[RMDB]
RNA sequence: GGGAACGACUCGAGUAGAGUCGAAAACAGAGCGAGACCCUGUCUCAAAAAACAAAACAUUUACAUGUAUGUAAAAUGUCCCUAUAUGUAUACUCGAGAACAGGGUUUGGCAAACUAUACCUGCAACUGAUUCCUGCCGAUUCGUCGGCAGGAAUCAAAAAGAAACAACAACAACAAC
Reactivity to 2A3 in 0.01 (KOAc 150mM, MgCl2 10mM, bicine 150mM(pH8.5), 24C), signal-to-noise 2, nucleotides 027 to 126: c080a020g060a010g140c050g040a020g000a010c000c040c040u000g000u000c000u010c000a030a040a030a030a000a000c070a000a010a000a000c000a000u040u040u000a000c010a000u190g300u300a090u060g030u000a040a050a080a080u090g010u090c010c050c050u000a020u000a030u280g060u020a050u040a050c130u200c110g000a000g050a060a000c000a000g000g000g000u000u000u000g020g000c000a000a140a000c130u090a090u160a220c010c000u030g020c000a010a050c100
Conditions: 150 mM KOAc, 10 mM MgCl2 and 150 mM bicine (pH 8.5), 24 C. The record gives the reactivity of an RNA of 177 nucleotides to 2A3. Reactivities are given for positions 27 through 126. The data come from the RNA Mapping Database (RMDB), library OK1LIB. For 2A3, 541 sequencing reads were counted.